[RMDB]
Structure probing data (2A3 and DMS) for a 177-nucleotide construct. It was measured as part of the RMDB library RFMREP. The RNA was probed in 150 mM KOAc, 10 mM MgCl2 and 150 mM bicine (pH 8.5) at 24 C. For DMS the reverse transcriptase was MarathonRT. For 2A3 the reverse transcriptase was SuperScript II with manganese.
RNA sequence: GGGAACGACUCGAGUAGAGUCGAAAACCCGACGCCUGGCGGAGAAUCAGGGUUCGACUCCGGAGAGCGGGCCUGCGAGACGGCCCGCACAUCCAAGGACGGCAGCAGGCGCGGAACUUGCCCAAUGCAAUGUUCAUAACUUCGGUUAUGAACAUUGAAAAGAAACAACAACAACAAC
Reactivity to 2A3 in 0.01 (KOAc 150mM, MgCl2 10mM, bicine 150mM(pH8.5), 24C), signal-to-noise 2, nucleotides 027 to 126: c000c000c000g010a190c010g020c020c040u120g110g210c070g030g160a120g140a130a170u160c060a090g130g050g070u080u100c000g030a040c040u000c040c000g000g010a010g000a000g040c000g000g000g010c000c010u040g000c050g030a050g040a020c070g000g000c020c000c000g010c000a010c000a000u000c000c000a010a000g030g010a010c010g030g050c010a020g080c000a010g010g000c000g000c000g010g030a020a020c020u050u170g030c000c000c000a010a000u120g020
Reactivity to DMS in 0.01 (KOAc 150mM, MgCl2 10mM, bicine 150mM(pH8.5), 24C), signal-to-noise 2, nucleotides 027 to 126: c100c000c000g020a120c040g030c020c000u000g020g020c030g010g010a130g030a100a080u010c080a110g010g010g010u010u000c030g000a110c080u010c030c040g000g000a080g000a100g000c000g000g000g000c000c000u000g000c250g000a160g000a120c250g000g000c000c000c020g000c020a000c070a090u010c010c020a120a180g010g000a060c100g030g000c060a080g020c010a020g000g000c010g030c020g000g000a060a020c080u000u000g000c010c000c020a110a080u020g000